RNA sequence: GGGAACGACUCGAGUAGAGUCGAAAAGAGCGCCCGCACCAACGCGGCGGGGUCGCCCACCUCACGUGCCAUCGCCAGCGCUUGUUGUGCGGGAGCGAUGAUGUCGGUGGCGCCUACCGGACUGGUGCUGUGAACCAGUGUUCGCACUGGUUCACAGAAAAGAAACAACAACAACAAC
Reactivity to 2A3 in 0.01 (KOAc 150mM, MgCl2 10mM, bicine 150mM(pH8.5), 24C), signal-to-noise 1, nucleotides 027 to 126: g110a010g030c080g030c020c030c000g020c010a000c020c000a020a010c020g020c000g070g000c030g010g030g000g000u060c050g060c040c030c030a070c000c010u050c000a080c070g010u150g030c000c010a170u080c050g000c030c040a130g030c000g020c130u050u150g170u140u080g020u080g020c020g060g000g020a010g000c010g020a050u080g010a010u070g030u070c020g000g030u030g000g050c010g020c010c020u000a050c000c020g060g000a010c030u020g060g000u040g000
Reactivity to DMS in 0.01 (KOAc 150mM, MgCl2 10mM, bicine 150mM(pH8.5), 24C), signal-to-noise 2, nucleotides 027 to 126: g030a300g000c080g010c010c000c010g000c000a020c010c010a010a040c080g010c030g010g030c050g020g000g000g010u010c040g020c070c030c070a170c060c060u020c070a110c080g030u000g000c040c020a070u020c010g020c020c020a130g020c010g020c170u000u000g030u000u010g040u000g010c030g000g000g010a050g010c000g010a080u010g010a120u000g030u010c080g000g040u000g010g000c000g000c030c030u000a110c030c020g010g000a090c090u010g010g000u000g000
Structure probing data (2A3 and DMS) for a 177-nucleotide construct.
For 2A3, 1,434 sequencing reads were counted.
The data come from the RNA Mapping Database (RMDB), library OK2TRN.
2A3 is a SHAPE reagent: it acylates the 2'-hydroxyl of flexible nucleotides of all four kinds.
For DMS the reverse transcriptase was MarathonRT.